[RMDB]
RNA sequence: GGGAACGACUCGAGUAGAGUCGAAAACAAAAACAAAACAAGGCUAACAAAUCGUGGAGCCGACACGUUGCAAAGAAAGCAACGAACCACCGCGAAACAAGCUGUUAAGAAGAACAGCAAAACAAAAGCACUGUCUUACGUUCGCGUAAGACAGUGCAAAAGAAACAACAACAACAAC
Reactivity to 2A3 in 0.01 (KOAc 150mM, MgCl2 10mM, bicine 150mM(pH8.5), 24C), signal-to-noise 2, nucleotides 027 to 126: c010a100a080a130a020a000c030a010a080a000a000c070a090a070g000g000c010u070a110a000c080a100a190a060u080c030g000u000g030g000a030g000c000c060g030a010c020a010c020g030u000u000g000c000a010a060a170g030a260a290a000g070c010a000a000c000g000a000a010c030c020a060c010c000g010c040g000a030a030a040c050a030a030g060c030u060g000u060u110a110a210g120a150a000g090a020a100c010a040g000c110a020a030a060a010c140a000a030a000a000
This 177-nucleotide RNA was probed chemically with 2A3.
For 2A3 the reverse transcriptase was SuperScript II with manganese.
Source: RMDB library OK1LIB, as collected in RNAgym.
The reactions ran in a buffer of 150 mM KOAc, 10 mM MgCl2 and 150 mM bicine (pH 8.5), at 24 C.
The 2A3 profile rests on 1,006 reads.